[RMDB]
RNA sequence: GGGAACGACUCGAGUAGAGUCGAAAAGGGCAAGCAGCCCGUCGUCGAGCUGGAGUACCUGAGGUUCGCCAAUCAGGCGUUAGCCGAGCUCUGGGAUCGCAACAGCAUCUCCGAGAUCCACAUCACCCCCUGGUAUGAGGUUCGCCUCAUACCAGGGAAAAGAAACAACAACAACAAC
Reactivity to 2A3 in 0.01 (KOAc 150mM, MgCl2 10mM, bicine 150mM(pH8.5), 24C), signal-to-noise 2, nucleotides 027 to 126: g040g000g040c050a060a170g010c030a080g030c080c060c010g030u030c020g110u030c020g020a030g000c020u050g050g030a010g040u090a140c010c010u060g070a070g040g000u100u070c020g000c020c020a090a300u270c130a070g060g000c060g090u110u150a020g000c020c000g040a010g020c000u000c020u000g000g080g020a030u020c070g010c030a060a260c040a230g000c000a020u040c010u000c000c000g030a040g010a050u030c040c010a070c000a110u110c080a180c010c050
Reactivity to DMS in 0.01 (KOAc 150mM, MgCl2 10mM, bicine 150mM(pH8.5), 24C), signal-to-noise 3, nucleotides 027 to 126: g010g020g060c010a060a170g020c140a170g010c010c020c010g000u000c090g020u020c060g020a060g000c050u000g010g000a060g020u000a110c010c020u000g000a110g000g010u000u000c100g050c000c080a090a120u010c130a100g000g010c050g000u000u020a060g020c020c010g010a120g010c060u000c020u010g000g020g000a030u000c180g040c050a070a120c190a090g020c050a040u020c030u000c010c030g010a110g000a080u010c030c080a060c110a100u020c150a220c130c030